[RMDB]
RNA sequence: GGGAACGACUCGAGUAGAGUCGAAAACCCCAUUAAACAUUCUGAGAACAUCUGCACCGGUUUCCAAGGCUUCUCCCUCACUAAUUGCUCUGAUUAUUGUGUGAAGUGAAGCACUGGCACGUUUCCGACUUUCUUACUGGUUCGCCAGUAAGAAAGUAAAAGAAACAACAACAACAAC
Reactivity to 2A3 in 0.01 (KOAc 150mM, MgCl2 10mM, bicine 150mM(pH8.5), 24C), signal-to-noise 2, nucleotides 027 to 126: c000c030c030c000a040u160u260a090a110a100c010a020u120u110c050u110g070a050g050a180a040c000a030u000c020u100g000c040a050c030c060g020g050u030u100u070c010c020a000a090g030g000c000u060u020c020u020c050c010c010u000c000a020c000u050a010a050u070u030g090c040u050c050u140g070a080u060u070a060u120u060g080u000g030u040g020a030a020g000u030g060a030a010g040c030a050c030u010g050g000c010a010c030g000u000u030u000c000c030g010
Reactivity to DMS in 0.01 (KOAc 150mM, MgCl2 10mM, bicine 150mM(pH8.5), 24C), signal-to-noise 1, nucleotides 027 to 126: c080c000c000c150a110u030u010a090a120a130c070a050u000u010c070u000g010a140g010a070a070c020a030u000c040u000g020c080a090c050c040g000g030u010u000u000c030c020a070a160g030g000c040u000u010c030u000c110c020c030u010c000a030c040u010a030a040u000u010g000c120u010c110u000g000a070u000u000a010u020u000g010u000g010u010g000a070a010g030u000g000a030a050g020c000a090c040u000g000g020c210a110c060g000u000u000u000c010c020g010